[RMDB]
RNA sequence: GGGAACGACUCGAGUAGAGUCGAAAACUUCGGUAGUUCGCUACCGAAGAAAAGACAGACUACGCAACUGUCAAAAACACAACAAAAGUGUAAAAGCGUAGAAAAGUUCCCACUUCGGUGGGAACAAGUUAGAUAGGCUGUUCGCAGCCUAUCUAACAAAAGAAACAACAACAACAAC
Reactivity to DMS in 0.01 (KOAc 150mM, MgCl2 10mM, bicine 150mM(pH8.5), 24C), signal-to-noise 1, nucleotides 027 to 126: c000u000u000c000g000g030u020a010g000u000u020c230g040c010u000a000c000c000g000a040a010g000a050a070a070a230g000a010c000a000g010a140c000u000a000c000g000c010a190a050c020u000g000u010c020a040a090a070a120a120c000a000c000a090a180c210a060a080a080a090g000u000g000u000a090a070a070a060g000c000g000u000a000g010a160a030a060a110g000u000u000c000c000c010a000c010u000u010c090g030g030u000g000g010g000a010a010c000a030a060
Reactivity to 2A3 in 0.01 (KOAc 150mM, MgCl2 10mM, bicine 150mM(pH8.5), 24C), signal-to-noise 2, nucleotides 027 to 126: c000u000u000c000g000g000u010a020g010u060u060c210g010c100u000a000c000c000g000a000a010g010a000a050a000a000g020a000c000a000g010a030c010u000a000c000g000c030a200a130c070u000g000u020c010a040a000a000a000a000c050a030c040a150a030c030a060a150a080a090g020u010g010u060a080a130a020a010g000c000g000u010a000g050a010a090a000a000g000u010u010c000c010c000a010c000u020u060c240g070g000u000g000g030g010a000a000c000a000a010
Conditions: 150 mM KOAc, 10 mM MgCl2 and 150 mM bicine (pH 8.5), 24 C. This 177-nucleotide RNA was probed chemically with DMS and 2A3. It was measured as part of the RMDB library M2PK50. The 2A3 profile rests on 2,499 reads. 2A3 adducts were read by reverse transcription with SuperScript II with manganese.